[RMDB]
RNA sequence: GGGAACGACUCGAGUAGAGUCGAAAACAUGACGAGUUCGCUCGUCAUGAAAGAAAGAAAGAUAGUCUGAAGCGCCAGACUAGCGCAAAAGAAAGAAAGAAAAAAGCAAACUCUUCGGAGUUUGCAACGUGAAUUCUUAGUUCGCUAAGAAUUCACGAAAAGAAACAACAACAACAAC
Reactivity to 2A3 in 0.01 (KOAc 150mM, MgCl2 10mM, bicine 150mM(pH8.5), 24C), signal-to-noise 2, nucleotides 027 to 126: c000a000u000g010a010c000g000a010g010u040u050c110g120c120u000c000g010u000c000a000u000g010a000a010a010g080a000a050a010g070a060a120a010g030a070u100a030g020u000c000u010g070a130a010g150c050g060c140c010a010g060a060c030u040a000g010c060g000c060a090a060a010a100g060a020a100a010g070a040a080a010g030a040a240a030a020a010a000g000c010a000a000a000c000u010c020u070u130c240g100g000a020g000u000u000u000g000c000a000a000
Reactivity to DMS in 0.01 (KOAc 150mM, MgCl2 10mM, bicine 150mM(pH8.5), 24C), signal-to-noise 2, nucleotides 027 to 126: c020a010u000g000a000c000g000a050g030u010u010c300g020c020u000c000g000u010c000a010u010g000a040a050a050g000a130a060a100g000a070a080a110g000a110u000a010g000u010c010u000g010a100a150g010c090g030c230c030a010g000a010c040u000a020g020c020g030c160a040a040a130a050g010a080a090a030g000a060a050a140g010a030a030a030a020a100a100g000c000a020a000a000c040u000c000u000u010c210g010g000a000g000u000u000u020g000c010a010a020
Source: RMDB library M2PK50, as collected in RNAgym. An RNA of 177 nucleotides, treated with 2A3 and DMS and read out base by base. 2A3 is a SHAPE reagent: it acylates the 2'-hydroxyl of flexible nucleotides of all four kinds.